[RMDB]
RNA sequence: GGGAACGACUCGAGUAGAGUCGAAAAGUCGCCUCCUUCGGGAGGCGACAAAUACAGAGACUACGCAACACUGAAAAACACAACAAAAGUGUAAAAGCGUAGAAACAUCCACGUUCGCGUGGAUGAAGAAAUGUAUAAUCUUCGGAUUAUACAUUUCAAAAGAAACAACAACAACAAC
Reactivity to DMS in 0.01 (KOAc 150mM, MgCl2 10mM, bicine 150mM(pH8.5), 24C), signal-to-noise 4, nucleotides 027 to 126: g010u000c000g030c000c000u010c000c000u010u010c200g040g010g010a010g010g040c000g010a000c000a000a050a070u020a160c110a160g000a190g020a210c020u000a000c010g020c000a140a040c010a010c020u000g000a050a060a050a090a090c220a080c270a050a100c190a050a110a140a020g000u000g010u000a050a080a080a120g010c000g000u000a020g000a060a050a200c010a000u000c010c000a000c000g010u010u010c130g010c010g060u000g000g010a010u000g000a040a070
Reactivity to 2A3 in 0.01 (KOAc 150mM, MgCl2 10mM, bicine 150mM(pH8.5), 24C), signal-to-noise 2, nucleotides 027 to 126: g000u000c010g000c010c010u020c020c040u040u040c110g080g000g000a000g010g000c020g000a000c000a000a000a000u040a000c000a010g120a000g060a060c000u000a000c000g010c000a040a000c000a020c020u010g060a070a010a000a050a000c210a020c030a150a100c050a050a130a040a020g000u000g000u050a050a120a050a060g000c000g010u000a000g000a000a010a000c000a000u000c010c000a000c010g010u030u030c210g020c020g060u000g000g000a000u000g000a000a010
Chemical mapping of a 177-nucleotide RNA with DMS and 2A3. DMS adducts were read by reverse transcription with MarathonRT. The reactions ran in a buffer of 150 mM KOAc, 10 mM MgCl2 and 150 mM bicine (pH 8.5), at 24 C. It was measured as part of the RMDB library M2PK50.